[RMDB]
RNA sequence: GGGAACGACUCGAGUAGAGUCGAAAAGAUAUGGAUCACGAUGGGAGCUAAUACUCGGAAACGAGUACUAGCGAAGAACAUCUUGAUCCUAAGUCAAAAUCCCGCACCAGUUCGCUGGUGCGGGAAAGAUUAAUAUAACCUUCGGGUUAUAUUAAUCAAAAGAAACAACAACAACAAC
Reactivity to DMS in 0.01 (KOAc 150mM, MgCl2 10mM, bicine 150mM(pH8.5), 24C), signal-to-noise 1, nucleotides 027 to 126: g000a010u000a010u000g000g010a000u010c010a030c120g000a050u000g000g020g010a060g010c000u000a010a010u000a000c010u020c000g000g010a010a010a020c000g000a030g010u000a000c070u000a000g030c020g050a060a120g010a190a300c030a000u000c000u010u000g000a020u000c000c010u000a010a050g000u000c010a130a120a190a130u000c010c030c020g050c000a000c060c030a020g050u030u030c190g010c050u000g000g050u000g000c020g000g010g000a010a010a030
Reactivity to 2A3 in 0.01 (KOAc 150mM, MgCl2 10mM, bicine 150mM(pH8.5), 24C), signal-to-noise 1, nucleotides 027 to 126: g000a000u010a020u060g000g000a000u000c000a010c060g010a010u020g030g010g110a260g030c000u000a010a000u030a040c010u010c000g020g020a010a000a000c010g050a000g000u000a000c000u010a000g000c000g000a020a030g050a020a000c000a000u000c000u000u000g000a000u010c000c010u010a020a000g000u000c000a010a020a030a300u040c000c040c000g190c010a010c000c020a050g300u300u300c300g110c180u000g000g000u030g050c150g000g000g000a030a040a000
Overview:
Chemical mapping of a 177-nucleotide RNA with DMS and 2A3. For 2A3 the reverse transcriptase was SuperScript II with manganese. The reactions ran in a buffer of 150 mM KOAc, 10 mM MgCl2 and 150 mM bicine (pH 8.5), at 24 C.